[RMDB]
RNA sequence: GGGAACGACUCGAGUAGAGUCGAAAAAAAACGCUGGGACAAUAAGACAGAUGGUUCCAAUUGAGUCCACUGAAGCGCGCACGGUGGACAAUGAUGUUGGAACAUCAAUGACGUUGUCCUGUGCUGAAGCGCGCACGGCAACCGAAAGGUGCGAAAAGUUGUAUAUUCGCUUCGGCGAAUAUACAACAAAAGAAACAACAACAACAAC
Reactivity to 2A3 in 0.01 (KOAc 150mM, MgCl2 10mM, bicine 150mM(pH8.5), 24C), signal-to-noise 2, nucleotides 027 to 156: a010a010a010a020c020g020c000u020g000g000g000a000c010a020a010u060a160a040g040a090c060a050g140a100u230g160g000u010u000c000c000a000a000u010u040g020a010g000u000c000c010a010c000u020g030a230a040g000c000g000c000g030c000a020c020g010g000u000g000g000a000c000a000a100u080g030a010u070g020u010u000g010g010a020a000c010a030u100c040a010a120u080g030a020c080g020u000u000g000u000c000c000u000g020u000g000c000u000g010a120a010g010c000g010c000g000c020a000c010g010g000c000a000a010c000c000g020a060a050a040g000g000u030g020c000g030a030a110a010a060
Record summary:
The data come from the RNA Mapping Database (RMDB), library RNAMAK. Chemical mapping of a 207-nucleotide RNA with 2A3. The reactions ran in a buffer of 150 mM KOAc, 10 mM MgCl2 and 150 mM bicine (pH 8.5), at 24 C. 2A3 adducts were read by reverse transcription with SuperScript II with manganese.